[RMDB]
RNA sequence: GGGAACGACUCGAGUAGAGUCGAAAACACCCGGAGGUUGGGUUUGUCGAGUUCGAGGACGGCACGAACUUCUCCCACACGCACACGCAUGACGCCGGGUUGGCCUUCAAGCAUUCGCACUUUCGCGUGCGUGGUCGGUUGUCGAAUACUCGCCACGCGCACUACUCUGUUUCGACAGAGUAGUGCGAAAAGAAACAACAACAACAAC
Reactivity to 2A3 in 0.01 (KOAc 150mM, MgCl2 10mM, bicine 150mM(pH8.5), 24C), signal-to-noise 1, nucleotides 027 to 156: c030a040c010c000c000g020g050a130g020g050u020u030g020g030g020u060u200u300g060u230c120g020a060g010u070u060c030g020a070g120g080a020c050g020g030c120a010c110g090a110a040c000u140u090c020u040c000c010c000a020c000a030c020g030c000a070c000a010c120g000c070a050u060g060a120c050g000c040c030g010g020g000u050u070g000g020c010c000u030u130c080a050a070g000c030a010u100u160c080g110c030a070c070u040u140u060c100g020c000g080u040g000c000g000u030g000g030u060c000g000g030u110u050g120u140c080g090a070a060u060a120c000u010c060g010c010c000a050c040g000